[RMDB]
Chemical mapping of a 170-nucleotide RNA with DMS and 2A3. The RNA was probed in 150 mM KOAc, 10 mM MgCl2 and 150 mM bicine (pH 8.5) at 24 C. Values are in units of 0.01, from 0 to 300, in steps of 10. The 2A3 profile rests on 9,243 reads.
RNA sequence: GGGAACGACUCGAGUAGAGUCGAAAAAUGUUCACACGCAGCUGUUGAUGCUUUGUGUGAAAAAGCUUUUAAAUAUUUGAACAUUGCUAAAUGUUCCCGUAUCAUUCCUGCAAAGGCACGUGUUGAGAUAGUUGAACGUUCGCGUUCAACAAAAGAAACAACAACAACAAC
Reactivity to DMS in 0.01 (KOAc 150mM, MgCl2 10mM, bicine 150mM(pH8.5), 24C), signal-to-noise 4, nucleotides 027 to 129: a070u070g020u040u010c010a020c020a030c040g060c200a050g040c010u050g020u100u050g000a120u050g000c010u030u030u030g040u030g030u000g020a010a030a040a100a060g040c240u000u000u000u000a140a120a060u060a050u030u040u060g000a050a030c060a020u000u000g040c190u070a090a110a020u020g010u000u000c000c010c100g060u000a090u050c000a070u000u040c010c030u000g040c210a040a110a070g030g040c140a000c090g000u000g020u040u070g010a050g010a130u030a060
Reactivity to 2A3 in 0.01 (KOAc 150mM, MgCl2 10mM, bicine 150mM(pH8.5), 24C), signal-to-noise 7, nucleotides 027 to 129: a000u130g030u010u000c010a010c000a010c000g020c010a010g000c020u050g060u300u250g120a060u170g000c000u030u040u030g000u000g000u000g000a030a010a000a000a000g020c000u050u070u020u130a070a180a060u210a110u060u070u150g010a000a000c010a030u020u110g070c080u170a100a100a050u060g000u000u000c000c030c000g000u010a010u080c020a040u060u070c000c000u020g010c030a110a080a060g060g000c030a010c130g070u070g020u010u050g030a060g000a070u130a050